Structure probing data (2A3 and DMS) for a 177-nucleotide construct. DMS adducts were read by reverse transcription with MarathonRT. 2A3 adducts were read by reverse transcription with SuperScript II with manganese.
[RMDB]
RNA sequence: GGGAACGACUCGAGUAGAGUCGAAAAUGCCGAGAAAAGCCUCUAGCAAGGUCACAGGUGCCCGUACCGCAAACCGACACAGGUAGGCGAGGAGAGAAUCCUAAGGUGAGCGGGAGAACUCUCGUUAACGAAAGGUUAGAUUCGUCUAACCUUUCGUAAAAGAAACAACAACAACAAC
Reactivity to 2A3 in 0.01 (KOAc 150mM, MgCl2 10mM, bicine 150mM(pH8.5), 24C), signal-to-noise 2, nucleotides 027 to 126: u070g020c000c020g030a020g060a060a140a010a020g030c010c010u040c020u070a040g020c060a070a050g050g000u060c040a050c040a080g060g000u050g020c000c040c010g020u050a080c040c000g010c050a010a120a000c020c020g150a040c070a020c010a220g020g050u090a010g020g050c060g000a040g090g000a060g000a000g020a040a090u010c010c000u040a110a000g150g020u100g040a030g050c000g000g010g000a020g030a010a030c010u010c000u010c050g130u070u070a050
Reactivity to DMS in 0.01 (KOAc 150mM, MgCl2 10mM, bicine 150mM(pH8.5), 24C), signal-to-noise 5, nucleotides 027 to 126: u010g020c040c020g020a210g000a100a100a150a210g000c020c010u000c040u000a120g010c120a160a050g000g000u000c060a080c120a120g000g030u000g000c040c010c030g010u020a120c050c030g000c050a050a070a050c050c020g000a170c160a110c190a080g020g000u000a070g010g020c050g000a060g000g000a030g000a040g010a120a210u000c010c010u010a060a110g000g020u000g010a160g020c040g000g000g000a050g000a080a130c070u010c010u000c020g010u010u010a080